Conditions: 150 mM KOAc, 10 mM MgCl2 and 150 mM bicine (pH 8.5), 24 C. The record gives the reactivity of an RNA of 177 nucleotides to DMS and 2A3. For DMS the reverse transcriptase was MarathonRT. The DMS profile rests on 2,592 reads. The data come from the RNA Mapping Database (RMDB), library TTRDEL.
RNA sequence: GGGAACGACUCGAGUAGAGUCGAAAAGAUAUGGAAAACAGCGAUAAGCUGAUGGUCGGAAACGACCACCAGCUUUUGACGCUGUUCCUAAGUCAAAUCGCAAGGACGGUUCGCCGUCCUUGCGAAAUCUAUAAGGUUCGUUCGCGAACCUUAUAGAAAAAGAAACAACAACAACAAC
Reactivity to DMS in 0.01 (KOAc 150mM, MgCl2 10mM, bicine 150mM(pH8.5), 24C), signal-to-noise 2, nucleotides 027 to 126: g000a030u000a300u010g000g000a070a070a070a100c020a010g020c010g020a150u000a030a000g000c000u000g000a000u000g000g000u000c000g000g000a150a100a200c000g010a000c010c000a010c010c000a000g010c000u000u000u000u000g000a130c040g000c000u000g000u000u000c020c000u000a030a210g000u010c070a060a100a090u000c020g000c000a040a000g000g030a040c000g010g000u010u020c210g030c020c000g020u000c000c000u010u030g000c000g000a000a010a030
Reactivity to 2A3 in 0.01 (KOAc 150mM, MgCl2 10mM, bicine 150mM(pH8.5), 24C), signal-to-noise 2, nucleotides 027 to 126: g010a030u120a060u150g010g000a090a190a050a050c010a010g000c010g030a040u010a120a030g000c000u000g000a020u000g000g000u010c000g020g040a040a070a140c020g010a020c020c020a000c010c000a000g010c000u060u050u050u130g130a050c030g000c010u000g000u000u020c000c000u030a080a020g090u040c050a010a040a230u050c010g000c020a000a000g030g000a010c010g070g100u080u120c300g110c100c000g000u050c050c040u020u000g010c010g000a020a000a010